[RMDB]
RNA sequence: GGGAACGACUCGAGUAGAGUCGAAAAUACAGCAGUGAGGAAUCUUGGUCAAUGGGCCCACGCCUGAACUGGUAACUUGGAGGAAUGAGGGGUCAACUUUGCAAAUGGAUGAGUGAUCGUUAGAAGAUCCUUAGUCCCCUGGUCUUCUUGACACAUGCCUAGAAAUUACCUUCGGGUAAUUUCUAGGAAAAGAAACAACAACAACAAC
Reactivity to 2A3 in 0.01 (KOAc 150mM, MgCl2 10mM, bicine 150mM(pH8.5), 24C), signal-to-noise 2, nucleotides 027 to 156: u190a030c050a000g040c010a010g020u020g090a030g020g030a100a070u040c040u090u050g000g020u060c060a100a150u100g040g040g030c000c030c030a020c070g050c010c000u020g040a070a100c050u030g050g020u070a060a020c030u060u120g030g030a020g000g030a050a040u110g020a040g000g020g000g000u030c020a010a030c050u030u090u180g000c020a040a090a060u130g050g030a010u030g000a030g050u110g040a070u060c050g050u040u030a040g020a070a000g000a040u040c020c040u020u030a040g050u050c000c000c000c000u000g000g030u020c000u040u000c000u000u100g020a010c050a010c020a120u170g010
Reactivity to DMS in 0.01 (KOAc 150mM, MgCl2 10mM, bicine 150mM(pH8.5), 24C), signal-to-noise 1, nucleotides 027 to 156: u000a070c030a100g010c000a060g020u000g000a160g020g000a140a060u010c030u010u010g000g030u000c030a070a090u000g040g000g030c030c010c070a050c080g000c020c040u000g000a060a110c040u000g000g020u000a040a070c040u010u010g050g030a090g010g010a090a080u000g010a130g020g000g060g000u000c020a040a040c020u010u010u000g000c050a070a060a120u000g020g010a130u010g010a140g010u020g030a060u020c040g010u000u000a070g020a100a120g040a010u000c000c000u040u000a130g020u000c010c040c020c030u020g020g020u000c050u000u010c050u030u000g020a100c070a030c040a080u020g010
Source: RMDB library PDB130, as collected in RNAgym. The record gives the reactivity of an RNA of 207 nucleotides to 2A3 and DMS. Values are in units of 0.01, from 0 to 300, in steps of 10. For DMS the reverse transcriptase was MarathonRT. Conditions: 150 mM KOAc, 10 mM MgCl2 and 150 mM bicine (pH 8.5), 24 C.